Overview: Chemical mapping of a 177-nucleotide RNA with DMS and 2A3. It was measured as part of the RMDB library OK2TST.

RNA sequence: GGGAACGACUCGAGUAGAGUCGAAAAGGCGUCAGAGGCCGACGCGGCAGUCGCAGGGCUCAACGGCUUCGACAUCAGCGGGCGCAAGCUGCGCGUCGAGUACAAGAAGGUCUUGCAGGCCGGCGAACACUUUUACGGUCUUCGGACCGUAAAAGUGAAAAGAAACAACAACAACAAC
Reactivity to DMS in 0.01 (KOAc 150mM, MgCl2 10mM, bicine 150mM(pH8.5), 24C), signal-to-noise 2, nucleotides 027 to 126: g000g000c010g010u010c090a120g000a140g000g010c060c000g020a110c030g020c020g020g000c050a080g030u010c170g000c030a040g020g000g040c020u000c030a120a200c110g000g000c030u000u020c020g000a030c010a060u000c160a210g020c060g000g020g000c000g030c220a070a120g020c000u010g000c060g030c060g000u000c010g000a030g020u010a060c040a030a120g000a170a160g000g020u010c000u010u010g020c040a130g010g010c020c000g000g050c090g010a130a150
Reactivity to 2A3 in 0.01 (KOAc 150mM, MgCl2 10mM, bicine 150mM(pH8.5), 24C), signal-to-noise 1, nucleotides 027 to 126: g020g000c010g010u120c130a040g030a070g180g080c020c020g000a000c010g010c000g040g030c040a100g100u140c070g020c040a000g030g010g000c030u000c090a000a050c050g030g020c040u230u090c000g020a000c010a080u150c070a000g000c050g000g050g030c030g000c060a100a030g040c020u290g060c010g000c040g000u000c000g000a010g040u050a290c010a020a010g070a030a010g030g000u000c000u000u040g000c050a060g020g020c000c000g000g010c010g040a130a010